[RMDB]
Conditions: 150 mM KOAc, 10 mM MgCl2 and 150 mM bicine (pH 8.5), 24 C. Structure probing data (DMS) for a 207-nucleotide construct. Source: RMDB library RNAMAK, as collected in RNAgym.

RNA sequence: GGGAACGACUCGAGUAGAGUCGAAAAGGGUGAGUUCGCUCACCCAAAAAAGCGUACUACCCACAACAGGCGGACUCCCCACCAUAUUCCCAAAUAGGAAUAUGAGGUCCGAACUACCUGUGUGGGUAUCGCAAAAAUCCAGUGUUCGCACUGGAAAGUAUUCUAUAGGCUUCGGCCUAUAGAAUACAAAAGAAACAACAACAACAAC
Reactivity to DMS in 0.01 (KOAc 150mM, MgCl2 10mM, bicine 150mM(pH8.5), 24C), signal-to-noise 1, nucleotides 027 to 156: g030g010g070u000g010a000g020u020u020c290g070c010u000c010a070c000c010c000a010a020a020a100a020a050g050c030g040u000a070c130u010a070c010c000c020a050c010a090a060c040a030g000g000c000g050g030a120c100u000c080c060c000c030a300c160c020a010u010a000u010u010c000c000c000a050a120a140u010a040g020g000a020a010u010a040u020g000a110g040g010u000c030c160g020a130a140c010u010a030c000c000u000g030u050g040u000g000g000g050u000a000u010c000g020c000a020a050a060a070a270u000c000c000a020g020u000g020u010u020c240g050c020a010c010u000g000g020a030a050a040